[RMDB]
RNA sequence: GGGAACGACUCGAGUAGAGUCGAAAAGAAACGACGUAAGGCCUCUGAACGUCGCAGGAAGAAAUAUAGGAAACCUGAGGAAACAGGAACACGCAACGUAUGCCAUAAAAGAACUAGAGGCUAGAAACAUAAAUACCUGCUUCGGCAGGUAUUUAUGAAAAGAAACAACAACAACAAC
Reactivity to 2A3 in 0.01 (KOAc 150mM, MgCl2 10mM, bicine 150mM(pH8.5), 24C), signal-to-noise 4, nucleotides 027 to 126: g080a020a060a000c010g010a010c000g010u010a070a100g110g010c010c000u020c000u010g040a090a020c000g000u020c010g000c050a010g060g030a090a090g080a040a160a020u290a030u140a050g060g090a080a040a040c000c000u020g030a040g070g200a110a060a000c010a010g000g040a020a050c080a000c070g030c050a070a060c060g040u100a030u100g020c010c010a030u140a090a110a010a030g070a070a000c070u050a050g010a020g040g000c010u000a020g040a010a070a000
Reactivity to DMS in 0.01 (KOAc 150mM, MgCl2 10mM, bicine 150mM(pH8.5), 24C), signal-to-noise 5, nucleotides 027 to 126: g000a110a160a240c010g000a010c020g020u000a090a130g010g000c000c000u000c020u000g020a130a030c010g000u000c010g000c090a080g000g030a150a080g010a100a090a040u000a090u000a110g010g000a150a090a050c000c040u010g000a190g000g020a120a160a210c020a050g000g000a100a130c180a030c060g000c150a050a060c100g010u010a040u000g000c050c030a070u030a060a030a060a040g000a070a060c140u050a030g010a010g000g000c000u010a090g000a100a030a100